[RMDB]
RNA sequence: GGGAACGACUCGAGUAGAGUCGAAAAAAAAAUGUUCUAAAAUUACCUGUUGGAGGCCAGGUGCAGUGGCUCAUGCCUGUAAUCCUAACACUCAGGAAGCUGAGGUGGAAGGAUUGCUUGAGGCGAGGAAUUCAAGACCAGCUUGGACAACAUAGCAUCAUAGUAAUUACUUCGGUAAUUACUAUGAAAAAGAAACAACAACAACAAC
Reactivity to DMS in 0.01 (KOAc 150mM, MgCl2 10mM, bicine 150mM(pH8.5), 24C), signal-to-noise 2, nucleotides 027 to 156: a010a070a020a130a070u020g020u020u010c040u010a060a020a110a100u000u010a120c030c020u020g020u000u000g010g000a110g030g020c080c020a060g050g020u000g010c040a130g020u020g010g010c030u010c040a080u010g020c030c020u010g000u000a020a040u000c000c000u000a040a300c000a060c020u000c010a060g040g000a100a090g010c000u020g000a040g020g030u010g040g050a300a040g000g000a020u000u000g010c020u000u000g000a070g030g030c010g010a020g030g020a090a060u000u000c020a040a070g020a160c040c040a210g010c070u000u000g000g020a080c030a020a070c070a080u000a120g020c040a230
Reactivity to 2A3 in 0.01 (KOAc 150mM, MgCl2 10mM, bicine 150mM(pH8.5), 24C), signal-to-noise 3, nucleotides 027 to 156: a010a000a000a020a020u140g000u040u070c070u090a190a170a180a180u050u060a070c010c000u060g020u090u060g040g030a010g010g030c020c030a030g000g020u030g020c030a030g030u080g060g000c020u030c040a050u190g010c070c010u000g010u010a010a010u000c000c000u000a030a010c010a000c020u000c010a020g040g050a180a070g110c020u000g000a020g060g150u030g010g010a020a010g010g000a000u010u010g020c000u040u120g120a050g010g000c020g010a010g010g020a050a050u070u140c050a050a010g040a090c010c030a000g040c000u050u040g010g010a020c030a030a000c040a110u120a030g090c010a010